[RMDB]
The data come from the RNA Mapping Database (RMDB), library OK2TRN. The record gives the reactivity of an RNA of 177 nucleotides to 2A3 and DMS. Values cover nucleotides 27 to 126. DMS (dimethyl sulfate) methylates the pairing face of unpaired adenines and cytosines. The DMS profile rests on 3,198 reads. Conditions: 150 mM KOAc, 10 mM MgCl2 and 150 mM bicine (pH 8.5), 24 C.
RNA sequence: GGGAACGACUCGAGUAGAGUCGAAAAAGGAGAAGCAGCCCAGCGCGCCGCCUGCCCGCCGCCGCGUCAACCUGCCAGUGCCCAUGUUUGAGGACAACCUGGGGCCUCAGCUGUCCAAAGCGGACAGGACUAAGAUGUUCUUCGGAACAUCUUAGUCAAAAGAAACAACAACAACAAC
Reactivity to 2A3 in 0.01 (KOAc 150mM, MgCl2 10mM, bicine 150mM(pH8.5), 24C), signal-to-noise 2, nucleotides 027 to 126: a000g120g020a090g020a100a020g020c020a010g000c030c010c030a020g010c030g010c020g010c000c030g040c000c040u070g030c000c020c020g030c000c040g020c020c010g020c000g020u020c030a070a070c020c000u030g040c030c000a050g020u080g070c040c000c000a010u080g160u050u060u140g050a010g040g000a020c010a030a040c050c030u030g020g000g100g010c000c000u010c000a030g010c020u000g000u020c010c010a160a220a030g100c090g030g000a000c010a000g000
Reactivity to DMS in 0.01 (KOAc 150mM, MgCl2 10mM, bicine 150mM(pH8.5), 24C), signal-to-noise 3, nucleotides 027 to 126: a050g000g000a110g000a140a110g020c030a060g030c030c020c030a150g010c060g020c060g020c080c060g010c050c020u000g010c010c020c020g010c040c010g020c050c040g010c030g020u000c060a070a100c050c030u000g010c030c030a070g010u010g020c030c010c020a090u000g010u010u000u000g010a090g010g000a050c050a060a100c070c030u010g000g010g000g000c000c000u010c030a090g030c030u010g000u000c010c000a090a100a170g020c220g000g000a030c000a010g010